[RMDB]
RNA sequence: GGGAACGACUCGAGUAGAGUCGAAAAAUAACCUAUCUGUUCAAGGGAAGAUAGGAACACUGAUGCAAGGGACAACCCGCCAGCUUCUUGACAUGACACUGACUAACCUUGAUCCAGGAGACUAUCAGUCUUACAGAAUUUUCGAAUUCUGUAAGACAAAAGAAACAACAACAACAAC
Reactivity to 2A3 in 0.01 (KOAc 150mM, MgCl2 10mM, bicine 150mM(pH8.5), 24C), signal-to-noise 7, nucleotides 027 to 126: a000u060a020a010c010c000u020a060u040c010u040g120u110u070c050a070a060g080g030g010a030a030g030a040u040a020g020g030a030a010c060a020c050u070g030a030u100g030c030a050a050g040g000g040a090c040a090a120c030c010c030g000c010c010a030g010c020u060u030c000u040u060g040a040c010a080u100g030a020c000a010c110u060g080a030c020u040a050a060c010c010u020u040g000a030u010c020c010a020g050g050a060g060a060c020u100a060u230c040a050
Reactivity to DMS in 0.01 (KOAc 150mM, MgCl2 10mM, bicine 150mM(pH8.5), 24C), signal-to-noise 7, nucleotides 027 to 126: a080u010a090a100c000c000u000a020u000c020u000g010u010u000c100a090a080g010g010g020a210a030g000a030u000a010g000g010a100a090c130a080c090u000g000a070u000g010c050a050a070g010g000g010a070c130a060a110c080c040c030g000c060c030a060g000c040u000u010c030u000u000g000a100c090a040u010g000a070c100a070c050u000g000a060c050u000a060a140c030c000u000u010g010a090u000c060c070a050g000g000a090g010a100c090u010a070u000c110a120
An RNA of 177 nucleotides, treated with 2A3 and DMS and read out base by base. The reactions ran in a buffer of 150 mM KOAc, 10 mM MgCl2 and 150 mM bicine (pH 8.5), at 24 C. For 2A3 the reverse transcriptase was SuperScript II with manganese.